Structure probing data (2A3 and DMS) for a 177-nucleotide construct. For 2A3, 8,302 sequencing reads were counted. DMS adducts were read by reverse transcription with MarathonRT. The reactions ran in a buffer of 150 mM KOAc, 10 mM MgCl2 and 150 mM bicine (pH 8.5), at 24 C. For 2A3 the reverse transcriptase was SuperScript II with manganese. It was measured as part of the RMDB library TTRDEL.
[RMDB]
RNA sequence: GGGAACGACUCGAGUAGAGUCGAAAAGAUAUGGAAGCGAUAAGCACUAAAGCCAACAGCUCGGAAACGAGACAUGGCUGAUGUGCUUUUGACGCUUCCUAAGUCAAAAGCUGCGUUCGCGCAGCAACAACCAUGAUACGUUCGCGUAUCAUGGUUGAAAAGAAACAACAACAACAAC
Reactivity to 2A3 in 0.01 (KOAc 150mM, MgCl2 10mM, bicine 150mM(pH8.5), 24C), signal-to-noise 3, nucleotides 027 to 126: g000a000u090a010u180g000g000a010a000g000c020g020a050u020a060a000g020c000a000c010u090a200a030a000g010c020c000a060a050c070a220g040c000u000c000g020g010a080a080a070c020g000a000g050a050c020a110u110g010g000c010u000g000a010u030g000u000g000c000u000u000u000u000g030a010c000g010c000u000u000c000c000u000a020a020g030u000c020a060a000a070a140g020c000u000g020c010g060u050u140c300g000c000g000c150a000g050c000a000a000
Reactivity to DMS in 0.01 (KOAc 150mM, MgCl2 10mM, bicine 150mM(pH8.5), 24C), signal-to-noise 5, nucleotides 027 to 126: g000a050u000a300u000g000g000a010a000g010c000g030a140u000a010a030g010c000a010c010u000a230a250a010g010c000c000a020a070c260a120g000c000u010c000g010g000a060a060a230c000g000a000g000a020c090a170u000g010g010c000u000g000a140u010g010u000g000c000u000u000u000u010g010a140c050g000c010u000u000c000c000u000a010a070g000u000c040a070a050a080a090g000c000u000g010c000g020u000u010c160g010c010g020c010a000g010c000a060a080